RNA sequence: GGGAACGACUCGAGUAGAGUCGAAAAACACGUGCUCCAAAAGAGCACAGAGUCGCGCAAAUAUCUGGCUCGACUGAUGCGCGACAAAUCGAGCCAUGAAAAGACAGCGGGAAAACCGCUGUCGAAACGACAUGUAGGUCUUCGGACCUGCAUGUCGAAAAGAAACAACAACAACAAC
Reactivity to 2A3 in 0.01 (KOAc 150mM, MgCl2 10mM, bicine 150mM(pH8.5), 24C), signal-to-noise 9, nucleotides 027 to 126: a000c080a000c090g000u000g000c000u010c000c000a050a030a030a030g010a000g010c020a000c000a000g020a010g010u020c000g000c000g000c030a050a080a060u260a090u100c070u070g010g000c000u010c010g050a070c080u100g040a070u070g000c010g000c010g020a020c040a010a050a010u080c020g000a000g000c010c010a080u190g070a030a070a000a010g000a000c000a010g000c000g000g020g050a030a180a050a150c000c000g000c000u000g000u000c000g000a000a000a000
Reactivity to DMS in 0.01 (KOAc 150mM, MgCl2 10mM, bicine 150mM(pH8.5), 24C), signal-to-noise 4, nucleotides 027 to 126: a060c080a140c140g010u000g000c000u030c000c030a110a070a150a280g020a000g010c000a000c000a130g000a160g000u010c000g000c030g010c050a120a080a100u020a090u030c030u020g000g010c000u000c020g030a110c190u020g020a110u000g000c040g000c020g000a040c040a010a080a070u020c030g000a000g020c000c010a060u030g020a040a090a100a160g000a000c000a030g000c000g000g000g020a140a040a120a120c000c000g010c000u000g010u000c010g010a040a010a110